Source: RMDB library RFM100, as collected in RNAgym. Chemical mapping of a 177-nucleotide RNA with 2A3.
RNA sequence: GGGAACGACUCGAGUAGAGUCGAAAAUACACCAUGAGUUCCUAUUAACGUCAGCCUCUUUUGUACUCAUAAUGUGGCUUCGGAUGUUUGAUGGGCGUUGCUUCAGUGCGUACGGCUCAUGGUAGAUAGACCCCUGGGUGUUCGCACCCAGGGGUCUAAAAGAAACAACAACAACAAC
Reactivity to 2A3 in 0.01 (KOAc 150mM, MgCl2 10mM, bicine 150mM(pH8.5), 24C), signal-to-noise 1, nucleotides 027 to 126: u020a000c020a000c000c000a020u000g000a050g000u040u030c000c000u180a060u000u050a000a000c000g000u000c020a000g010c000c040u040c000u050u000u060u070g130u300a210c000u020c060a030u030a210a000u300g000u000g000g000c000u060u110c090g050g000a010u060g000u000u000u300g050a060u000g000g030g040c030g090u060u060g110c040u000u150c000a240g300u000g130c010g100u050a000c000g040g000c020u000c000a000u000g000g020u010a010g040a060u110
Conditions: 150 mM KOAc, 10 mM MgCl2 and 150 mM bicine (pH 8.5), 24 C.